Chemical mapping of a 177-nucleotide RNA with DMS and 2A3. The 2A3 profile rests on 3,908 reads. Values cover nucleotides 27 to 126. 2A3 adducts were read by reverse transcription with SuperScript II with manganese. The data come from the RNA Mapping Database (RMDB), library OK1LIB. The RNA was probed in 150 mM KOAc, 10 mM MgCl2 and 150 mM bicine (pH 8.5) at 24 C.
RNA sequence: GGGAACGACUCGAGUAGAGUCGAAAAGUAAAUUCAAUGAUUUUCAAGCCAUUACAGAACUGAUACAGUUCACAAUGUACUUCUUGCACCAUCUAACGUCGCUUGCAGGCCCAACUGGCUACGGCAGCCUUUGGGUACUGUUCGCAGUACCCAAAGGAAAAGAAACAACAACAACAAC
Reactivity to DMS in 0.01 (KOAc 150mM, MgCl2 10mM, bicine 150mM(pH8.5), 24C), signal-to-noise 2, nucleotides 027 to 126: g010u090a020a060a070u030u000c080a090a060u030g000a110u020u050u030u000c090a050a090g040c260c040a060u000u030a150c100a060g010a000a060c010u000g000a220u030a040c000a000g000u010u010c040a160c160a070a060u010g010u000a050c080u030u000c060u000u000g000c050a100c100c050a010u050c070u000a080a150c130g010u010c110g020c010u000u010g060c040a010g040g010c020c000c030a070a090c090u010g010g000c000u000a000c120g000g010c140a090g000
Reactivity to 2A3 in 0.01 (KOAc 150mM, MgCl2 10mM, bicine 150mM(pH8.5), 24C), signal-to-noise 6, nucleotides 027 to 126: g110u120a030a120a060u220u130c190a070a090u160g130a140u060u050u060u100c060a050a000g040c020c000a010u060u050a080c060a100g030a030a000c000u040g050a200u190a290c060a010g020u010u000c030a020c040a030a060u110g000u060a060c020u030u040c000u020u060g010c020a030c020c000a060u060c020u080a070a080c050g050u030c020g030c030u040u040g010c040a020g090g010c000c000c000a030a040c040u050g040g000c020u020a030c060g060g000c040a040g010